Conditions: 150 mM KOAc, 10 mM MgCl2 and 150 mM bicine (pH 8.5), 24 C. The record gives the reactivity of an RNA of 207 nucleotides to DMS and 2A3.
[RMDB]
RNA sequence: GGGAACGACUCGAGUAGAGUCGAAAAAGCAAGAACAGCCAGGGAGCUAAAGCAAGAAGCUGGGUUUUCUGUAACCUCUUCUGGCAUUUACACAGUCGGCAAGCUCUAUUAUGAUCCAACCUUUUCUGGAGAAACAACCAUCGAACGGCUGGCACAGCUGACAUUAACCCUUCGGGGUUAAUGUCAGAAAAGAAACAACAACAACAAC
Reactivity to DMS in 0.01 (KOAc 150mM, MgCl2 10mM, bicine 150mM(pH8.5), 24C), signal-to-noise 1, nucleotides 027 to 156: a100g070c070a100a070g010a070a150c020a170g010c010c010a110g010g010g010a020g040c000u010a040a090a300g040c010a090a030g010a040a030g030c300u000g060g020g000u010u010u000u020c070u010g010u010a070a070c090c020u000c000u000u000c030u000g010g110c010a150u000u010u000a100c090a010c050a070g000u000c010g000g000c030a130a150g000c020u000c010u010a090u010u010a070u000g010a150u000c010c000a030a070c030c100u000u000u000u000c130u000g000g000a080g020a160a070a060c040a090a140c000c010a030u000c050g010a070a120c070g040g020c040u010g000g000c030a040c080a130g020
Reactivity to 2A3 in 0.01 (KOAc 150mM, MgCl2 10mM, bicine 150mM(pH8.5), 24C), signal-to-noise 2, nucleotides 027 to 156: a000g050c080a070a010g030a070a020c020a000g000c000c020a000g030g000g030a010g000c010u090a100a020a020g040c060a040a030g020a010a000g030c130u300g010g090g020u000u000u030u130c080u140g100u090a010a060c000c000u020c020u180u000c000u000g000g000c000a000u020u020u110a040c080a000c030a010g080u080c030g030g060c020a030a030g000c000u010c030u030a180u180u070a060u180g050a020u000c000c000a010a100c070c030u110u150u060u060c060u040g000g080a040g040a040a070a020c040a060a080c030c040a040u110c070g040a040a020c040g030g000c010u010g000g000c030a000c010a060g080
Record summary
2A3 adducts were read by reverse transcription with SuperScript II with manganese. DMS adducts were read by reverse transcription with MarathonRT. The 2A3 profile rests on 724 reads.